[RMDB]
RNA sequence: GGGAACGACUCGAGUAGAGUCGAAAAACGAUCCUAGACAGUACCUAUGUCUAGCUGACGGAUCUACGGUACACUCCAUGCUCUAGCACUAGCGUCAUGUAGGAUCUCUAGACGAUCCAUGGUACUCAGCUGUGCAACAGUUCGCUGUUGCACAGCUAAAAGAAACAACAACAACAAC
Reactivity to 2A3 in 0.01 (KOAc 150mM, MgCl2 10mM, bicine 150mM(pH8.5), 24C), signal-to-noise 1, nucleotides 027 to 126: a010c040g060a040u010c000c010u000a000g040a050c050a020g020u070a100c000c010u090a010u160g000u000c000u000a000g000c120u120g060a050c040g020g030a060u000c010u030a030c060g000g010u040a020c060a030c050u050c010c010a020u050g010c000u030c070u120a010g010c020a040c110u030a010g040c000g060u080c080a040u150g060u070a050g140g010a030u000c010u000c030u070a070g030a080c060g000a050u000c000c030a050u060g000g000u050a020c000u020c050
Reactivity to DMS in 0.01 (KOAc 150mM, MgCl2 10mM, bicine 150mM(pH8.5), 24C), signal-to-noise 2, nucleotides 027 to 126: a120c250g010a190u030c010c020u000a100g000a070c050a060g030u000a100c100c070u000a080u010g010u000c010u000a030g000c300u000g030a090c090g010g000a050u010c000u000a090c120g000g000u000a070c110a090c040u000c040c130a080u040g000c070u000c060u000a090g030c020a070c130u000a020g000c070g020u000c050a040u010g010u000a020g030g000a010u000c070u000c100u010a130g010a060c140g000a030u000c030c080a030u000g000g040u000a020c060u000c140